An RNA of 177 nucleotides, treated with DMS and 2A3 and read out base by base. Values cover nucleotides 27 to 126. For DMS the reverse transcriptase was MarathonRT. The data come from the RNA Mapping Database (RMDB), library OK1LIB. Conditions: 150 mM KOAc, 10 mM MgCl2 and 150 mM bicine (pH 8.5), 24 C.

[RMDB]
RNA sequence: GGGAACGACUCGAGUAGAGUCGAAAAGGUAAAUCUUUGACAUACUGAUCUAAAACUGCUUGAAUCUUGUCUUGAUCUAAAGCCAGGGUUUUCGCUUCGAUGAUGUCCUUUAUGAUUUCAGGUUUGAUCCAAAGAUAGAUUUCGAUCUAUCUUUGGAAAAAGAAACAACAACAACAAC
Reactivity to DMS in 0.01 (KOAc 150mM, MgCl2 10mM, bicine 150mM(pH8.5), 24C), signal-to-noise 9, nucleotides 027 to 126: g000g010u020a050a060a050u010c030u000u010u010g010a100c100a100u020a060c080u010g000a100u030c050u020a070a070a110a120c090u000g000c040u000u010g010a040a050u010c030u000u000g000u000c030u000u000g010a120u030c110u020a060a080a070g010c060c100a050g000g010g010u000u000u000u010c040g010c020u010u000c070g000a130u010g000a030u010g000u000c050c100u010u010u030a060u030g000a100u010u010u010c050a090g010g000u000u020u010g010a160
Reactivity to 2A3 in 0.01 (KOAc 150mM, MgCl2 10mM, bicine 150mM(pH8.5), 24C), signal-to-noise 9, nucleotides 027 to 126: g100g020u110a050a060a080u040c040u050u070u100g040a020c020a040u150a110c050u090g080a070u030c030u200a050a050a050a170c060u100g030c020u040u060g040a060a030u020c000u030u030g030u010c000u030u090g070a150u070c060u250a110a030a030g030c020c020a010g010g010g000u000u000u010u010c020g000c000u040u050c040g060a070u050g000a020u020g050u050c000c030u090u180u110a170u220g130a150u030u100u100c060a030g050g100u010u080u100g050a040